RNA sequence: GGGAACGACUCGAGUAGAGUCGAAAAUGCAUUAAUGGUGGCACUUUCAAACUUUGAUGACAUCAGCGCGAGGUAUCCCACUGAUUUGCAAGAGCAACUCUUACGAGCAACUGAGGAAGUACCGGUAGUUUAGAAGACACUUCGGUGUCUUCUAAACAAAAGAAACAACAACAACAAC
Reactivity to 2A3 in 0.01 (KOAc 150mM, MgCl2 10mM, bicine 150mM(pH8.5), 24C), signal-to-noise 3, nucleotides 027 to 126: u050g020c010a020u020u140a190a090u240g060g000u030g030g070c020a000c050u130u230u110c080a110a120a080c080u090u100u160g060a080u110g050a040c020a070u040c020a010g030c010g000c020g030a000g000g060u060a050u040c000c010c000a000c010u050g040a140u030u050u100g000c040a070a020g030a000g060c030a030a070c010u000c000u060u060a030c060g020a020g050c020a050a030c030u050g000a030g050g070a070a030g010u020a040c000c020g040g040u040a060
Reactivity to DMS in 0.01 (KOAc 150mM, MgCl2 10mM, bicine 150mM(pH8.5), 24C), signal-to-noise 3, nucleotides 027 to 126: u020g010c040a080u000u010a060a110u020g020g020u000g000g010c120a040c040u010u000u020c100a070a100a100c080u000u010u010g010a070u010g020a050c060a200u000c060a050g010c090g010c140g000a030g010g010u000a050u000c060c050c020a120c100u000g010a100u000u000u010g020c050a050a050g020a100g000c080a030a040c050u000c030u000u020a070c090g010a050g000c040a080a040c040u010g000a080g000g000a070a080g020u000a090c040c040g000g020u000a110

Chemical mapping of a 177-nucleotide RNA with 2A3 and DMS. For 2A3, 2,391 sequencing reads were counted. DMS (dimethyl sulfate) methylates the pairing face of unpaired adenines and cytosines. 2A3 adducts were read by reverse transcription with SuperScript II with manganese. Conditions: 150 mM KOAc, 10 mM MgCl2 and 150 mM bicine (pH 8.5), 24 C. DMS adducts were read by reverse transcription with MarathonRT. For DMS, 2,448 sequencing reads were counted.